[RMDB]
RNA sequence: GGGAACGACUCGAGUAGAGUCGAAAACGUGGGAUGCUCUUCCCAAUCUGACCUGACCCCUCCCCCAGCGGGUCGCCCAGGAAUGGCGGGACCCCACUUCAGCAGGGUCCGCGUUCCAUCCUUUCUUGUCAGGACUUGUUCGCAAGUCCUAAAAGAAACAACAACAACAAC
Reactivity to 2A3 in 0.01 (KOAc 150mM, MgCl2 10mM, bicine 150mM(pH8.5), 24C), signal-to-noise 9, nucleotides 027 to 129: c050g020u080g000g010g000a020u100g080c060u040c050u160u030c010c000c020a000a070u070c060u050g060a060c010c010u020g150a150c010c000c010c020u050c010c000c000c000c010a010g020c050g010g000g010u010c010g010c000c000c000a020g040g080a050a020u070g300g280c020g010g030g010a040c000c020c010c000a110c020u250u220c090a090g030c040a050g020g010g000u000c010c020g060c010g010u050u000c000c000a020u040c010c020u020u050u010c020u020u040g070u060c050
Reactivity to DMS in 0.01 (KOAc 150mM, MgCl2 10mM, bicine 150mM(pH8.5), 24C), signal-to-noise 5, nucleotides 027 to 129: c030g040u010g000g020g030a000u030g040c130u040c120u030u000c000c000c000a060a050u060c130u030g050a190c000c000u000g040a300c050c010c000c010u040c000c000c010c010c100a120g000c080g010g000g000u000c020g000c000c000c000a100g020g050a030a030u050g080g100c000g030g010g010a020c030c030c020c150a030c090u070u060c140a130g000c200a000g020g060g030u010c010c050g070c000g030u000u000c000c000a070u080c090c070u000u000u000c050u020u050g030u060c140
This 170-nucleotide RNA was probed chemically with 2A3 and DMS. Reactivities are rounded to 0.1 and cut off at 0 and 3. Conditions: 150 mM KOAc, 10 mM MgCl2 and 150 mM bicine (pH 8.5), 24 C. 2A3 adducts were read by reverse transcription with SuperScript II with manganese. It was measured as part of the RMDB library 15KLIB.